[RMDB]
RNA sequence: GGGAACGACUCGAGUAGAGUCGAAAAUAGUGAACUGUAGAAGUAAAGUUUUAUUGUCUGCUGAAAAAAUGAUAAUAGGGCAAAGUUUGUUUACAGGCAAUACAUUAUUUUGCUAUGCAUGAAGAAAACAUGCAUUAAAUGGUUAAGUGAUAAUGAACGCAUAGCUAAAUUUCGAUUUAGCUAUGCGAAAAGAAACAACAACAACAAC
Reactivity to DMS in 0.01 (KOAc 150mM, MgCl2 10mM, bicine 150mM(pH8.5), 24C), signal-to-noise 1, nucleotides 027 to 156: u000a060g040u010g000a040a130c020u000g040u000a050g010a090a180g010u000a090a080a260g010u000u000u000u000a020u040u000g010u000c000u020g030c180u000g000a020a060a090a100a110a100u000g000a070u000a020a050u010a050g040g030g020c030a020a080a220g010u000u010u000g010u020u010u000a020c030a060g020g010c050a020a140u020a090c050a020u000u000a060u000u000u000u010g010c040u010a010u010g020c010a030u000g010a070a160g010a170a100a050a150c010a030u010g000c000a030u020u000a050a060a090u010g000g000u000u010a040a140g020u010g010a020u000a040a100u000g000a080a150
Reactivity to 2A3 in 0.01 (KOAc 150mM, MgCl2 10mM, bicine 150mM(pH8.5), 24C), signal-to-noise 2, nucleotides 027 to 156: u060a000g070u020g040a050a030c040u050g030u090a030g000a160a020g050u110a040a090a030g000u040u010u020u040a030u010u010g010u000c000u010g040c030u060g030a080a090a050a010a050a090u050g030a020u070a070a080u050a140g020g050g050c030a040a100a060g020u020u070u080g020u070u110u010a020c010a000g010g000c000a020a000u010a040c030a000u000u050a020u030u140u030u090g040c020u050a000u040g000c000a000u030g010a050a190g060a080a060a000a010c000a020u010g000c000a000u030u080a040a080a010u080g000g000u070u090a100a060g010u000g070a040u030a080a100u100g050a090a010